Structure probing data (2A3 and DMS) for a 177-nucleotide construct. For 2A3, 868 sequencing reads were counted. Source: RMDB library OK2TST, as collected in RNAgym. 2A3 adducts were read by reverse transcription with SuperScript II with manganese.
RNA sequence: GGGAACGACUCGAGUAGAGUCGAAAAGAAGGUGCGCAUCCUUUCGAUAUAGGUUGCUUAUUGGAUCUUCAAGGGAUAGCCGUCCGUACAGGGCAUCAAUGUGCACAACCUGCUAUGACCCGAUGGACCGUGAGAAUCGGUUCGCCGAUUCUCACGGAAAAGAAACAACAACAACAAC
Reactivity to 2A3 in 0.01 (KOAc 150mM, MgCl2 10mM, bicine 150mM(pH8.5), 24C), signal-to-noise 1, nucleotides 027 to 126: g050a010a010g000g080u040g040c100g020c020a000u020c000c000u000u050u030c060g090a010u020a010u040a180g070g000u050u110g150c020u100u060a120u160u300g120g000a000u010c020u090u000c040a070a060g090g010g020a020u050a020g040c000c000g060u000c010c000g000u010a090c060a160g000g070g000c020a050u080c050a140a140u180g030u000g020c010a040c020a010a020c030c010u030g000c000u020a050u260g060a160c000c040c000g040a080u110g010g000a010
Reactivity to DMS in 0.01 (KOAc 150mM, MgCl2 10mM, bicine 150mM(pH8.5), 24C), signal-to-noise 2, nucleotides 027 to 126: g000a080a120g000g010u010g000c100g020c040a060u000c030c030u010u010u020c170g030a150u010a070u020a060g000g010u010u010g000c040u000u030a080u000u000g000g010a050u000c060u000u020c060a070a100g000g000g000a040u000a090g020c080c110g000u000c030c010g030u000a090c200a140g010g000g000c030a060u010c150a070a070u000g010u010g000c040a100c070a080a200c080c030u020g000c090u010a100u010g000a160c020c020c000g020a150u000g000g000a240